[RMDB]
Conditions: 150 mM KOAc, 10 mM MgCl2 and 150 mM bicine (pH 8.5), 24 C. Chemical mapping of a 177-nucleotide RNA with DMS and 2A3. 2A3 adducts were read by reverse transcription with SuperScript II with manganese. As a SHAPE reagent, 2A3 marks flexible, mostly unpaired nucleotides at the ribose 2'-OH. Reactivities are given for positions 27 through 126. Values are in units of 0.01, from 0 to 300, in steps of 10. It was measured as part of the RMDB library TTRDES.
RNA sequence: GGGAACGACUCGAGUAGAGUCGAAAAGAUAUGGACGUACAGCAAGGCCGUGCAUCGGAAACGAUGCGGCUGAUGACCUGUGACGUCCUAAGUCAAAGCCCCUGUAACGUUCGCGUUACAGGGGCAACUCUACAUUCUCGUUCGCGAGAAUGUAGAGAAAAGAAACAACAACAACAAC
Reactivity to DMS in 0.01 (KOAc 150mM, MgCl2 10mM, bicine 150mM(pH8.5), 24C), signal-to-noise 4, nucleotides 027 to 126: g010a040u000a300u010g020g000a010c010g020u000a030c010a010g000c040a090a120g020g020c000c020g020u000g020c040a010u000c000g010g010a110a070a150c010g040a000u000g010c000g010g020c010u010g000a090u010g010a160c300c010u000g010u010g020a030c010g010u000c010c000u000a010a080g010u000c040a110a150a200g010c000c000c000c000u000g000u000a000a000c000g010u000u010c240g010c020g020u000u000a010c000a000g030g000g010g010c000a000a010
Reactivity to 2A3 in 0.01 (KOAc 150mM, MgCl2 10mM, bicine 150mM(pH8.5), 24C), signal-to-noise 4, nucleotides 027 to 126: g040a020u070a050u140g010g010a000c000g000u010a010c010a010g010c070a190a300g020g000c050c090g210u300g120c030a020u000c000g060g000a040a060a010c010g000a000u020g000c030g010g000c010u020g050a210u180g040a030c010c020u010g030u100g210a040c000g000u010c000c000u010a060a010g030u040c030a070a160a010g010c010c010c000c000u000g000u000a010a020c000g010u050u070c300g040c010g170u020u010a000c000a000g000g000g000g000c000a000a000